The record gives the reactivity of an RNA of 177 nucleotides to 2A3 and DMS.
The RNA was probed in 150 mM KOAc, 10 mM MgCl2 and 150 mM bicine (pH 8.5) at 24 C.
The 2A3 profile rests on 820 reads.
For DMS, 1,530 sequencing reads were counted.
2A3 adducts were read by reverse transcription with SuperScript II with manganese.

RNA sequence: GGGAACGACUCGAGUAGAGUCGAAAAAUCGUACGACAACAGAUGAAAAUGGUAAAUAUCAGUUCACUGGUUUAAGCAAUGGAACUUAUAGUGUAGAGUUUUCAACACCAGCCGGUUAUACACCGACUGAUACCGGCGAUUUCGAUCGCCGGUAUCAAAAAGAAACAACAACAACAAC
Reactivity to 2A3 in 0.01 (KOAc 150mM, MgCl2 10mM, bicine 150mM(pH8.5), 24C), signal-to-noise 2, nucleotides 027 to 126: a000u120c120g030u090a090c080g020a040c050a080a000c060a120g160a040u110g250a060a000a000a080u100g020g000u040a080a090a080u150a000u060c010a020g000u000u000c040a030c110u010g000g270u070u080u240a000a000g070c050a030a020u050g020g060a000a000c000u000u000a010u000a300g090u090g100u050a020g020a000g020u020u000u050u070c030a140a020c000a000c000c000a000g010c020c020g000g000u070u000a060u020a130c040a000c040c030g000a000c000
Reactivity to DMS in 0.01 (KOAc 150mM, MgCl2 10mM, bicine 150mM(pH8.5), 24C), signal-to-noise 1, nucleotides 027 to 126: a010u040c060g020u000a070c000g030a070c090a090a030c030a030g030a040u000g000a050a000a030a060u010g000g010u020a070a060a030u000a010u000c030a000g010u000u030c060a070c060u000g000g010u000u010u090a030a040g020c050a080a090u090g010g050a010a060c010u000u000a020u000a080g010u030g010u010a060g020a260g030u000u000u000u000c010a010a000c030a110c070c030a080g000c130c000g040g050u000u110a020u070a030c180a030c000c030g000a090c030